[RMDB]
RNA sequence: GGGAACGACUCGAGUAGAGUCGAAAAGUAAUGUCAUUUGAUAUUUUUUGUUGUAUUGGAAAUUUAACAAUAUAAAACUAUAGCUGUGUUAUAUCAAAUGCAACAACCUGGAUUAAUUAACCGCACAAACUAUGACCCCAAGAUCUUAUCGGUAUUCCAAACUAUGUCGGUUCGCCGACAUAGUUUGAAAAGAAACAACAACAACAAC
Reactivity to 2A3 in 0.01 (KOAc 150mM, MgCl2 10mM, bicine 150mM(pH8.5), 24C), signal-to-noise 1, nucleotides 027 to 156: g100u150a050a120u070g040u060c000a010u020u030u060g000a020u020a060u030u100u020u060u090u140g000u000u000g020u010a050u000u040g010g110a000a070a140u150u300u290a210a000c000a000a010u050a010u020a100a170a020a030c040u110a070u120a270g060c050u050g050u100g060u240u060a040u000a000u020c010a010a000a000u000g000c050a010a000c020a010a010c020c020u030g020g000a080u100u000a050a020u030u040a290a000c020c000g050c040a020c010a010a030a100c060u060a010u110g060a070c050c000c000c000a000a020g010a120u030c060u060u090a050u200c040g020g000u020a060u060u000c000

Structure probing data (2A3) for a 207-nucleotide construct. The RNA was probed in 150 mM KOAc, 10 mM MgCl2 and 150 mM bicine (pH 8.5) at 24 C.